[RMDB]
RNA sequence: GGGAACGACUCGAGUAGAGUCGAAAACUCCAUCGCUCAUGUCGGCGAUCGGCGGCCGCGGGAACCUAGGCGACGAACUUGCGCAGCAUAAGUUCGCCUAUUCCGAGCUCAUGGGGCCUGAAAGCAGGGCAUGGAACGCGCUCAAGAACGCGCCUGACACGGAGACAGGAUUCGUCCUGUCUCCGUGAAAAGAAACAACAACAACAAC
Reactivity to 2A3 in 0.01 (KOAc 150mM, MgCl2 10mM, bicine 150mM(pH8.5), 24C), signal-to-noise 1, nucleotides 027 to 156: c040u040c020c000a050u030c050g000c000u000c040a100u080g000u110c000g000g010c000g010a070u010c000g000g080c000g010g040c050c030g290c040g170g020g010a090a060c030c030u000a020g000g000c030g090a110c020g050a010a100c030u080u050g010c300g060c090a190g030c000a100u090a000a000g030u100u120c010g010c000c000u040a120u090u000c010c000g050a040g010c000u000c000a010u050g000g000g090g000c030c010u130g120a210a100a000g020c010a040g050g040g050c000a010u060g000g000a050a100c000g020c000g010c040u000c060a080a090g020a100a040c000g000c000g010c040c020u030g030a010
Description: An RNA of 207 nucleotides, treated with 2A3 and read out base by base. The data come from the RNA Mapping Database (RMDB), library OK3TST. For 2A3, 567 sequencing reads were counted. The RNA was probed in 150 mM KOAc, 10 mM MgCl2 and 150 mM bicine (pH 8.5) at 24 C.